[RMDB]
RNA sequence: GGGAACGACUCGAGUAGAGUCGAAAAUUCCACAAGGGAUACAUGAAUCAACGAAAGUGUCUGUUAAAGUUUUGGGAGAUUAAUACUGCUCGCGUUCUUCUUUAGCAUCCGUUUUGGAUGCACCUUGGGUGUAUCUCAACUUCGGUUGAGAUACACCAAAAGAAACAACAACAACAAC
Reactivity to DMS in 0.01 (KOAc 150mM, MgCl2 10mM, bicine 150mM(pH8.5), 24C), signal-to-noise 1, nucleotides 027 to 126: u010u000c010c000a140c110a100a180g000g000g020a180u000a010c000a080u090g050a070a110u000c210a140a020c100g000a150a100a100g000u000g070u000c020u030g000u000u000a070a110a090g000u010u000u000u000g010g050g010a200g080a200u000u010a090a090u000a080c030u000g000c000u030c040g030c070g000u010u000c130u000u000c020u020u000u020a070g000c000a000u000c000c070g020u010u000u070u040g040g000a000u000g050c000a020c140c020u000u030g030
Reactivity to 2A3 in 0.01 (KOAc 150mM, MgCl2 10mM, bicine 150mM(pH8.5), 24C), signal-to-noise 3, nucleotides 027 to 126: u000u000c000c000a020c050a000a030g040g020g020a050u120a140c060a110u150g120a100a110u150c050a060a030c000g050a010a020a090g060u070g040u070c020u050g070u120u210a060a060a020g050u000u100u190u150g040g060g000a080g000a040u130u040a030a050u040a150c010u000g020c000u000c040g020c010g000u010u010c000u070u040c000u100u240u050a030g020c000a000u000c000c010g040u070u050u090u180g000g000a000u020g000c010a020c000c000u020u030g040
This 177-nucleotide RNA was probed chemically with DMS and 2A3. For DMS the reverse transcriptase was MarathonRT. The RNA was probed in 150 mM KOAc, 10 mM MgCl2 and 150 mM bicine (pH 8.5) at 24 C.